[RMDB]
RNA sequence: GGGAACGACUCGAGUAGAGUCGAAAACGCCGGCUGCUGAUUUGGAACGACCUGCACGUCGUGAGCGAGCCGCGCGUGACCUACAACGAGGUCAUCAAGGGCUACGAGCUGCGCGGGUUCCGGGUGCCGCAUGAUUUAGUUUCGACUAAAUCAUGCGAAAAGAAACAACAACAACAAC
Reactivity to 2A3 in 0.01 (KOAc 150mM, MgCl2 10mM, bicine 150mM(pH8.5), 24C), signal-to-noise 3, nucleotides 027 to 126: c010g040c030c010g010g010c020u040g000c010u070g060a290u150u120u240g120g080a120a010c010g040a030c040c050u160g010c080a030c090g030u020c010g010u040g050a020g010c070g040a010g020c000c010g070c010g000c000g020u010g000a010c000c000u020a050c040a160a030c090g090a020g000g030u020c010a020u010c050a120a140g040g040g000c020u090a050c100g060a050g050c020u030g000c030g000c010g000g050g000u060u020c030c000g040g010g010u010g060c030
Reactivity to DMS in 0.01 (KOAc 150mM, MgCl2 10mM, bicine 150mM(pH8.5), 24C), signal-to-noise 4, nucleotides 027 to 126: c060g030c040c010g010g020c040u000g020c010u000g000a140u000u020u000g010g010a150a050c040g010a030c040c050u010g010c120a090c160g000u000c010g010u000g000a060g010c020g010a060g030c020c000g000c120g020c060g010u000g010a040c000c000u000a080c140a090a090c210g010a060g020g000u000c010a050u000c070a140a140g000g000g010c020u010a070c130g010a160g020c030u000g000c050g000c020g010g010g020u000u000c050c020g010g000g020u000g020c090